The data come from the RNA Mapping Database (RMDB), library M2PK90.
Structure probing data (DMS and 2A3) for a 177-nucleotide construct.
For 2A3 the reverse transcriptase was SuperScript II with manganese.
The reactions ran in a buffer of 150 mM KOAc, 10 mM MgCl2 and 150 mM bicine (pH 8.5), at 24 C.
Values cover nucleotides 27 to 126.
RNA sequence: GGGAACGACUCGAGUAGAGUCGAAAAACUUUUAGCGUUUGCAAGACCCUGUUCUUGCAAUGAUCUGGAUUUAGCGCACGGAGGUCCGAAAUCCAGAUCAACAUUUCGGACCUCCGCGCUAAUAAAAGAUAGAAAUGGAGUUCGCUCCAUUUCUAUCAAAAGAAACAACAACAACAAC
Reactivity to DMS in 0.01 (KOAc 150mM, MgCl2 10mM, bicine 150mM(pH8.5), 24C), signal-to-noise 3, nucleotides 027 to 126: a090c060u010u000u000u010a050g020c080g010u000u010u000g000c000a020a000g000a010c030c260c190u010g010u020u010c000u000u000g000c000a000a010u000g010a110u000c050u000g010g000a230u000u010u000a010g000c010g000c040a090c200g040g010a010g000g010u000c010c000g000a010a010a010u000c140c110a140g000a120u010c170a060a080c130a030u000u000u000c010g010g000a020c000c000u000c000c000g020c000g000c000u000a000a010u010a040a070a100a090
Reactivity to 2A3 in 0.01 (KOAc 150mM, MgCl2 10mM, bicine 150mM(pH8.5), 24C), signal-to-noise 2, nucleotides 027 to 126: a000c000u090u070u120u160a060g030c020g070u050u060u070g000c000a000a000g000a000c050c030c300u150g060u140u010c000u000u000g010c000a010a010u060g040a100u010c040u050g110g020a080u040u020u040a020g000c000g010c010a040c100g010g000a000g020g000u000c000c030g030a010a000a010u070c070c060a060g030a180u110c010a000a020c020a000u000u010u010c020g000g000a010c040c000u010c000c000g010c000g000c000u000a000a000u020a000a010a010a010